[RMDB]
RNA sequence: GGGAACGACUCGAGUAGAGUCGAAAAACUCUUCUUUCCCUUCUCUCGUCUUCCCGGGUCAACUUCUUAAGUUCCUCUUCCUCCUCCUUGCUGAGUGUCUUGCCUCCUGCGCUCAGCUGCUUCUUCUUGUUCUCGAGGGCCUUCCUUCGUCGGUGAUAUACCAUACACAGUUCGCUGUGUAUGGUAUAAAAGAAACAACAACAACAAC
Reactivity to 2A3 in 0.01 (KOAc 150mM, MgCl2 10mM, bicine 150mM(pH8.5), 24C), signal-to-noise 1, nucleotides 027 to 156: a000c060u070c020u170u040c090u070u060u110c030c030c040u050u040c040u010c000u050c030g020u010c000u040u030c000c000c010g000g000g000u050c090a080a050c060u080u130c050u070u110a120a040g010u030u050c000c000u040c000u080u050c000c000u000c000c000u030c020c000u050u040g020c040u040g000a020g010u030g030u110c060u060u080g080c000c000u030c010c000u020g000c020g000c010u030c010a010g010c000u010g020c010u030u110c000u060u000c000u030u080g070u210u080c080u020c020g040a130g020g060g000c030c000u030u110c000c000u000u210c030g060u000c020g030g000u060g050a000u030
This 207-nucleotide RNA was probed chemically with 2A3. Conditions: 150 mM KOAc, 10 mM MgCl2 and 150 mM bicine (pH 8.5), 24 C.